Source: RMDB library OK3TST, as collected in RNAgym.
Structure probing data (2A3) for a 207-nucleotide construct.
Conditions: 150 mM KOAc, 10 mM MgCl2 and 150 mM bicine (pH 8.5), 24 C.
2A3 adducts were read by reverse transcription with SuperScript II with manganese.
RNA sequence: GGGAACGACUCGAGUAGAGUCGAAAAAAACAUUCAUUCUCUCACACAGUCUCUGCAGGUCAGGAACCUGGGUGCAGCUUCAUGGGGUGGUUCUGGCUCAGGGUCUCAGGUUGCAUUUGAGCUGCUGUCUGAGGUUACAGCCCUACCUAUCAAAGCACUCAGUAGGUGAUUUCGAUCACCUACUGAGAAAAGAAACAACAACAACAAC
Reactivity to 2A3 in 0.01 (KOAc 150mM, MgCl2 10mM, bicine 150mM(pH8.5), 24C), signal-to-noise 2, nucleotides 027 to 156: a000a000a000c080a030u140u130c000a020u040u000c020u000c000u000c020a020c000a010c000a070g040u020c020u000c060u200g010c020a050g140g000u110c000a030g040g090a090a070c020c000u020g000g020g020u090g060c060a000g000c000u040u070c030a100u120g000g000g020g030u030g050g040u060u160c050u060g010g030c010u000c110a060g000g020g100u020c020u000c000a000g020g010u000u110g000c010a040u000u110u250g120a090g050c110u020g000c020u040g040u070c000u000g020a000g000g010u030u010a010c010a020g010c010c000c000u010a060c010c000u060a060u160c060a080a080a010g050c070a000